[RMDB]
The record gives the reactivity of an RNA of 177 nucleotides to DMS and 2A3.
As a SHAPE reagent, 2A3 marks flexible, mostly unpaired nucleotides at the ribose 2'-OH.
The RNA was probed in 150 mM KOAc, 10 mM MgCl2 and 150 mM bicine (pH 8.5) at 24 C.
2A3 adducts were read by reverse transcription with SuperScript II with manganese.
The DMS profile rests on 1,737 reads.
The 2A3 profile rests on 2,023 reads.
RNA sequence: GGGAACGACUCGAGUAGAGUCGAAAAAAAAAAAGAUAUGGACGUCGUGAAAGACAGCAACAGCGUACCGCUGGUCGGAAACGACCAUGUACGACAUGCUGGGGAGCGACGUCCUAAGUCAAAAAAACAUAUACGGAGAGUUCGCUCUCCGUAUAUGAAAAGAAACAACAACAACAAC
Reactivity to DMS in 0.01 (KOAc 150mM, MgCl2 10mM, bicine 150mM(pH8.5), 24C), signal-to-noise 2, nucleotides 027 to 126: a000a000a010a060a040a170a110g010a040u000a300u000g010g010a020c000g020u000c000g000u000g000a210a060a200g050a100c010a000g000c000a010a050c200a200g010c010g000u010a010c000c010g000c000u000g000g020u000c000g000g010a100a080a090c020g000a000c000c000a000u000g000u000a010c000g010a040c050a120u010g010c000u000g000g010g000g050a300g010c000g010a000c000g000u000c000c000u010a020a140g000u000c010a000a020a070a090a080a070a100
Reactivity to 2A3 in 0.01 (KOAc 150mM, MgCl2 10mM, bicine 150mM(pH8.5), 24C), signal-to-noise 1, nucleotides 027 to 126: a000a000a000a000a000a000a000g120a090u190a080u080g020g000a000c000g010u010c000g010u030g170a300a060a100g280a050c010a000g020c010a000a130c020a120g050c020g010u000a010c000c020g000c050u010g000g000u000c000g010g010a080a020a060c010g000a000c020c000a000u140g000u000a020c010g090a130c030a020u070g000c000u060g000g020g060g100a090g000c000g000a000c000g000u020c000c000u000a030a000g000u030c040a020a060a000a000a040a050a120